[RMDB]
RNA sequence: GGGAACGACUCGAGUAGAGUCGAAAAGAUAUGGACGUAAGGCUCGAUAAGCUGGUGUCGGAAACGACAUGCAGCUUUUGACGAGCCAUUACGUCCUAAGUCAAACAUCCCUUCUUCGGAAGGGAUGCAUGAUGUCUUUCUUCGGAAAGACAUCAUGAAAAGAAACAACAACAACAAC
Reactivity to DMS in 0.01 (KOAc 150mM, MgCl2 10mM, bicine 150mM(pH8.5), 24C), signal-to-noise 9, nucleotides 027 to 126: g010a040u000a300u010g000g010a010c000g010u000a010a010g000g020c000u000c000g010a140u000a020a020g020c010u000g000g010u000g000u000c010g010g000a070a070a180c000g000a010c000a000u000g020c000a000g020c000u000u000u000u010g010a220c160g010a010g010c000c000a010u000u000a010c000g010u000c000c000u000a000a090g010u000c030a140a130a300c010a000u000c000c000c000u000u000c000u000u020c230g020g000a020a000g000g010g000a000u000g000
Reactivity to 2A3 in 0.01 (KOAc 150mM, MgCl2 10mM, bicine 150mM(pH8.5), 24C), signal-to-noise 6, nucleotides 027 to 126: g030a020u060a030u130g000g000a010c010g000u000a010a020g010g000c010u000c040g110a150u050a300a000g000c010u000g010g000u010g000u010c010g000g010a080a060a010c010g020a000c030a050u270g270c010a110g000c000u020u010u020u030g060a040c010g000a000g000c020c000a000u000u000a000c000g000u020c000c000u000a000a000g000u010c020a060a040a120c010a010u000c000c010c000u000u010c030u040u040c270g220g000a010a010g000g020g000a000u000g010